[RMDB]
RNA sequence: GGGAACGACUCGAGUAGAGUCGAAAAGACUCUCACAAAGGGAUAGUUGUGAGAGAAUGGUCCUCUUAGUCACCGAAAGGUGAUUAGGAGGACCAUAGUUGUGCUUACUAUCCCUUGAGCACAACAGGCACAGCAGACUAUUCGUAGUCUGCUGUGCAAAAGAAACAACAACAACAAC
Reactivity to DMS in 0.01 (KOAc 150mM, MgCl2 10mM, bicine 150mM(pH8.5), 24C), signal-to-noise 1, nucleotides 027 to 126: g010a300c020u000c000u000c020a000c000a000a040a040g080g000g010a190u010a030g000u010u000g010u010g000a020g000a010g000a090a020u000g020g000u000c000c000u000c020u010u000a000g010u000c000a000c000c000g010a160a080a160g000g000u000g000a000u000u000a020g000g010a020g000g000a000c000c000a000u000a010g000u000u000g010u000g000c000u000u000a100c130u000a090u000c010c000c010u000u000g000a020g000c010a010c010a000a000c030a190g000
The record gives the reactivity of an RNA of 177 nucleotides to DMS. For DMS, 1,235 sequencing reads were counted. The data come from the RNA Mapping Database (RMDB), library OK2TRN. Conditions: 150 mM KOAc, 10 mM MgCl2 and 150 mM bicine (pH 8.5), 24 C.